[RMDB]
RNA sequence: GGGAACGACUCGAGUAGAGUCGAAAAGAUAUGGAAGCCACUACCCACCCGAUUCGUCCAUGGGAGAGCUAUGGGUCGGAAACGACCCUAAGGCUUCAUGGACGAAUCGGAGGUGGCUUCCUAAGUCCUACUAAGAGACGUUCGCGUCUCUUAGUAGAAAAGAAACAACAACAACAAC
Reactivity to 2A3 in 0.01 (KOAc 150mM, MgCl2 10mM, bicine 150mM(pH8.5), 24C), signal-to-noise 2, nucleotides 027 to 126: g070a150u280a280u300g000g000a020a000g000c000c000a030c030u200a300c040c040c000a030c000c010c000g010a000u000u020c010g000u030c000c040a010u030g040g090g110a300g070a000g120c000u020a120u150g020g000g000u000c020g050g020a110a140a100c000g030a030c000c000c050u020a100a030g000g000c000u190u160c030a000u000g000g010a000c000g000a000a010u010c000g000g000a000g000g010u000g000g010c010u020u010c000c000u000a000a020g000u070c000
Reactivity to DMS in 0.01 (KOAc 150mM, MgCl2 10mM, bicine 150mM(pH8.5), 24C), signal-to-noise 2, nucleotides 027 to 126: g000a190u000a150u000g000g020a010a010g000c000c000a030c010u000a130c070c010c040a300c100c000c030g000a020u000u000c010g000u000c000c000a040u000g000g030g010a170g000a030g020c000u000a300u000g010g000g020u000c000g000g010a090a070a260c020g000a030c000c010c000u000a020a110g040g010c000u000u000c010a000u000g030g000a020c010g000a000a000u010c000g000g030a010g020g010u010g000g000c000u000u000c010c000u000a000a090g000u000c120